[RMDB]
RNA sequence: GGGAACGACUCGAGUAGAGUCGAAAAGGGGUCAACGAUGUCCUUGGAUUUAUAGAGCUUUUGACGGUCUGAAGCCUCCACGGACCGAUAAGCUCUAUUGUCAGGACGCGUUGACGGAGGCACCCAAAAUCAUCAAGACCUUCGGGUCUUGAUGAAAGACCCGUUCCUAGUUCGCUAGGAACGGGUCAAAAGAAACAACAACAACAAC
Reactivity to 2A3 in 0.01 (KOAc 150mM, MgCl2 10mM, bicine 150mM(pH8.5), 24C), signal-to-noise 2, nucleotides 027 to 156: g120g020g030g000u020c010a030a010c020g210a300u070g000u000c020c010u070u130g110g020a100u080u300u040a030u070a030g000a000g000c020u080u110u130u280g130a130c130g010g010u030c000u010g020a090a030g020c000c010u070c000c000a070c000g000g000a000c000c010g000a020u050a100a000g000c010u000c000u000a000u000u030g090u090c120a030g010g030a010c000g010c000g010u000u000g000a000c000g000g020a000g000g020c010a030c000c000c000a190a000a000a010u020c000a030u000c010a000a000g020a000c000c070u110u240c300g020g000g000u000c000u020u000g000a000u000g000a000a000a000
The record gives the reactivity of an RNA of 207 nucleotides to 2A3. It was measured as part of the RMDB library RNAMAK. The reactions ran in a buffer of 150 mM KOAc, 10 mM MgCl2 and 150 mM bicine (pH 8.5), at 24 C.